[RMDB]
RNA sequence: GGGAACGACUCGAGUAGAGUCGAAAAACUCGAUUUUGUGAUUGAGCCGCUGCCCAAUCACCUGUUUACUCGUGAUACCUCAUGCUGGGUGUAUGGCGGGGUGUCACUCAAUCCAAUGAUGAAACCACAUUUACCCCAGGUUCGCCUGGGGUAAAUGAAAAGAAACAACAACAACAAC
Reactivity to 2A3 in 0.01 (KOAc 150mM, MgCl2 10mM, bicine 150mM(pH8.5), 24C), signal-to-noise 2, nucleotides 027 to 126: a040c040u040c040g060a070u020u080u080u190g060u140g020a010u010u000g010a010g040c060c050g200c300u190g050c050c020c000a030a070u030c010a020c010c040u020g150u280u190u180a100c070u020c060g050u030g030a020u070a250c050c030u010c030a070u100g000c030u050g040g070g110u060g100u200a140u210g000g000c070g000g000g000g000u050g030u040c050a010c000u020c000a010a020u000c020c040a050a000u110g050a050u060g080a050a060a020c000c000a040
Reactivity to DMS in 0.01 (KOAc 150mM, MgCl2 10mM, bicine 150mM(pH8.5), 24C), signal-to-noise 2, nucleotides 027 to 126: a070c080u010c010g010a110u010u010u010u000g000u020g010a030u000u000g010a020g010c050c160g020c100u000g000c010c010c010a090a120u010c020a020c000c080u010g000u000u000u000a080c130u000c080g000u010g000a020u000a090c100c080u010c060a080u010g050c120u000g000g000g000u010g010u000a060u010g010g010c080g010g000g000g000u010g030u000c080a090c030u010c060a060a030u010c040c060a070a050u020g010a130u000g010a060a090a130c040c080a160